[RMDB]
RNA sequence: GGGAACGACUCGAGUAGAGUCGAAAAAGACCAAUACAGAUUUUGGUACUGAGAGGAGGAGUAUUGCUGUAACAAAUACCUAAAAAUGUGGAAGUGGCCUUAGAACUAGGUAAUGAGUAGAGGCUGGGACCAUGAAGAAUUUCGAUUCUUCAUGGUCAAAAGAAACAACAACAACAAC
Reactivity to 2A3 in 0.01 (KOAc 150mM, MgCl2 10mM, bicine 150mM(pH8.5), 24C), signal-to-noise 3, nucleotides 027 to 126: a020g050a030c000c010a020a020u080a040c050a080g140a110u030u070u120u150g020g020u050a080c020u050g050a050g030a030g130g020a020g020g000a030g000u040a040u080u140g000c020u020g010u050a000a030c020a020a120a050u070a060c010c020u120a130a100a050a030a060u170g020u050g050g010a040a090g040u070g100g000c010c000u050u020a070g040a100a050c010u020a030g070g020u080a110a080u130g040a000g040u050a040g010a020g040g000c010u030g020g040
Reactivity to DMS in 0.01 (KOAc 150mM, MgCl2 10mM, bicine 150mM(pH8.5), 24C), signal-to-noise 4, nucleotides 027 to 126: a060g010a150c020c010a080a070u010a300c100a110g000a170u000u000u000u000g010g010u000a070c060u010g010a110g000a070g010g010a070g010g000a030g010u010a020u000u010g010c010u020g000u000a090a080c100a060a070a090u000a040c030c020u000a000a070a080a080a120u000g010u000g000g010a070a070g010u000g000g020c030c020u000u010a070g010a070a070c060u000a020g000g000u010a040a070u020g000a100g000u000a060g010a050g000g010c060u000g000g010